[RMDB]
RNA sequence: GGGAACGACUCGAGUAGAGUCGAAAACCUUGGUCCUUCGGGACCAAGGAAACCCGAAGACAUACAGACUGUGGGCGGCGAGACAAUCCACAACAGUCGCUAAAAGCGUCUGGUUCGCCAGACGCAACUUGUAGACAUGGUUCGCCAUGUCUACAAGAAAAGAAACAACAACAACAAC
Reactivity to DMS in 0.01 (KOAc 150mM, MgCl2 10mM, bicine 150mM(pH8.5), 24C), signal-to-noise 3, nucleotides 027 to 126: c000c000u000u000g010g000u000c000c000u000u000c240g040g020g010a000c000c000a000a000g000g000a010a040a100c000c000c000g030a080a080g010a130c140a090u020a070c150a100g000a040c010u000g020u000g000g020g030c140g000g010c190g020a140g010a190c230a080a100u000c010c010a020c050a140a020c080a020g000u000c010g000c150u000a050a040a120a110g030c010g020u000c000u010g010g000u000u010c220g010c010c010a000g020a010c010g010c010a000a020
Reactivity to 2A3 in 0.01 (KOAc 150mM, MgCl2 10mM, bicine 150mM(pH8.5), 24C), signal-to-noise 3, nucleotides 027 to 126: c000c000u010u000g000g000u010c020c020u030u030c210g100g000g020a000c000c000a000a000g020g000a070a040a000c010c000c000g040a060a030g150a050c080a040u300a040c070a070g060a030c010u000g000u050g030g080g020c090g040g000c060g030a040g020a070c060a050a070u030c000c000a020c000a100a030c000a010g020u020c020g000c080u120a050a070a040a090g000c000g000u000c000u020g000g030u020u050c250g030c000c000a000g000a000c000g000c000a000a000